[RMDB]
RNA sequence: GGGAACGACUCGAGUAGAGUCGAAAAGAUAUGGAUGCAGGCAACAGCUAUGACAUCGGAAACGAUGUAUAGACAUGCCUGUGUCCUAAGUCAAAGCAAAAGAAGGCGUUCGCGCCUUCUUUUGCAAGUCCUAUAUCGCGUUCGCGCGAUAUAGGACAAAAGAAACAACAACAACAAC
Reactivity to 2A3 in 0.01 (KOAc 150mM, MgCl2 10mM, bicine 150mM(pH8.5), 24C), signal-to-noise 1, nucleotides 027 to 126: g010a030u030a020u070g010g000a000u010g030c000a010g010g020c000a090a070c070a300g070c040u000a000u060g260a070c000a010u000c010g000g000a030a020a010c000g000a020u000g070u010a000u000a000g130a190c070a050u020g000c000c000u000g010u000g000u000c000c000u000a010a000g050u010c030a090a150a000g000c000a000a010a010a000g020a010a000g010g020c010g040u070u170c280g020c000g010c150c020u000u040c000u000u000u010u000g010c000a020a010
Reactivity to DMS in 0.01 (KOAc 150mM, MgCl2 10mM, bicine 150mM(pH8.5), 24C), signal-to-noise 2, nucleotides 027 to 126: g000a010u000a160u000g000g000a000u000g010c020a000g000g000c000a050a140c300a220g010c000u000a000u000g010a030c000a000u020c000g020g010a060a040a060c000g040a000u010g000u000a010u000a000g000a160c100a160u000g010c010c000u000g010u000g000u030c000c010u000a000a040g000u010c020a130a140a160g020c000a000a000a020a010g000a030a000g000g000c000g020u000u000c300g000c010g010c000c000u010u000c000u000u000u000u000g000c000a030a070